This 207-nucleotide RNA was probed chemically with 2A3 and DMS. It was measured as part of the RMDB library OK3TST. The 2A3 profile rests on 2,039 reads. For DMS the reverse transcriptase was MarathonRT. The reactions ran in a buffer of 150 mM KOAc, 10 mM MgCl2 and 150 mM bicine (pH 8.5), at 24 C.
RNA sequence: GGGAACGACUCGAGUAGAGUCGAAAAGGUUGACGAGGCAGAUGAAGAACGGCAGAAACAGCGUCUUGAAACGGUCAAGGAGGAGCGAGACACCGAUGCUGUUGACUCAUCUCUCAAAAGUGUUCGUGAAACAGCACGCGGUGAUGGGAACAUUAUGAAGUCCACUAUGAUUCGUCAUAGUGGACUUAAAAGAAACAACAACAACAAC
Reactivity to 2A3 in 0.01 (KOAc 150mM, MgCl2 10mM, bicine 150mM(pH8.5), 24C), signal-to-noise 3, nucleotides 027 to 156: g070g000u060u050g050a040c030g000a080g000g000c020a030g010a020u090g040a070a040g020a060a020c060g060g000c020a010g080a040a080a010c040a010g000c020g070u050c050u030u130g060a100a080a060c060g020g020u020c060a060a070g020g010a000g000g020a020g000c010g020a010g010a020c000a000c020c000g010a010u010g000c000u000g020u030u040g010a070c010u030c030a120u050c020u000c010u060c030a090a190a020a000g040u040g040u130u110c080g000u030g080a040a000a020c000a000g030c020a000c100g110c050g010g000u030g010a030u020g000g000g040a040a010c040a040u120u130a200u300g060
Reactivity to DMS in 0.01 (KOAc 150mM, MgCl2 10mM, bicine 150mM(pH8.5), 24C), signal-to-noise 3, nucleotides 027 to 156: g030g030u000u000g020a090c070g010a070g060g050c060a080g030a120u000g000a080a050g010a050a100c040g020g020c060a090g010a110a050a090c050a060g000c040g030u000c020u000u010g010a100a080a080c070g030g020u000c060a080a080g040g010a060g020g020a120g020c030g010a110g020a160c020a020c030c010g010a050u000g010c020u010g030u000u000g000a110c060u000c010a050u030c030u000c050u000c110a060a070a100a140g030u010g010u000u000c090g010u010g020a200a050a040c040a020g010c020a040c030g050c120g030g010u020g010a130u010g020g020g010a030a090c070a060u000u040a150u010g000